[RMDB]
RNA sequence: GGGAACGACUCGAGUAGAGUCGAAAAGAUAUGGAGCAAGACAUGAACAAACUCGGAAACGAGUUUAGUUCAACAGCUUGACUCCUAAGUCAAAACAGCCUAUAAGGGUUCGCCCUUAUAGGCUGAACGAAGAUGCAUGGUUCGCCAUGCAUCUUCGAAAAGAAACAACAACAACAAC
Reactivity to DMS in 0.01 (KOAc 150mM, MgCl2 10mM, bicine 150mM(pH8.5), 24C), signal-to-noise 1, nucleotides 027 to 126: g000a050u000a300u000g000g000a020g050c000a020a020g020a080c090a220u000g010a020a000c020a030a030a050c000u000c000g030g020a070a210a080c000g000a020g040u000u000u000a050g010u000u000c000a020a090c300a180g010c020u000u000g000a110c010u000c000c020u000a020a090g030u000c020a020a040a100a170c000a010g000c000c000u010a000u000a000a010g000g010g000u000u020c290g000c000c000c000u000u000a020u000a000g000g000c000u000g000a020a030